[RMDB]
RNA sequence: GGGAACGACUCGAGUAGAGUCGAAAAGGAGAUCGAAGAGGACCGACGUCAGCACGGUCUGGAUGUAGGUCCGCAUGCAUCCCAGUUGACGAAACUUUACGAUUUCCAAAGCGGACAAGAAGUCAAACAUAUUAUGGGACUUCGGUCCCAUAAUAUGAAAAGAAACAACAACAACAAC
Reactivity to DMS in 0.01 (KOAc 150mM, MgCl2 10mM, bicine 150mM(pH8.5), 24C), signal-to-noise 7, nucleotides 027 to 126: g000g010a010g010a010u000c000g000a160a120g010a050g000g010a060c130c120g000a110c000g000u000c060a040g020c050a170c170g020g010u030c130u010g010g000a010u000g000u000a130g000g010u010c000c010g000c020a040u000g010c040a010u000c000c000c270a090g010u000u010g000a060c060g000a100a060a070c010u010u000u000a220c030g000a020u000u000u000c000c010a070a090a080g010c000g000g000a020c000a140a130g010a090a080g000u020c060a070a100a170
Reactivity to 2A3 in 0.01 (KOAc 150mM, MgCl2 10mM, bicine 150mM(pH8.5), 24C), signal-to-noise 7, nucleotides 027 to 126: g010g000a010g000a000u010c010g030a090a020g050a070g070g060a030c030c050g050a050c020g060u070c050a020g030c070a030c100g070g110u080c100u070g010g000a000u010g000u000a000g060g000u000c000c000g000c000a000u000g000c010a000u000c020c010c020a020g010u030u030g030a050c060g050a080a070a060c010u010u030u050a030c010g010a010u010u010u010c010c010a030a070a010g010c020g000g000a010c020a070a080g110a110a020g080u100c050a080a030a010
The record gives the reactivity of an RNA of 177 nucleotides to DMS and 2A3. The RNA was probed in 150 mM KOAc, 10 mM MgCl2 and 150 mM bicine (pH 8.5) at 24 C.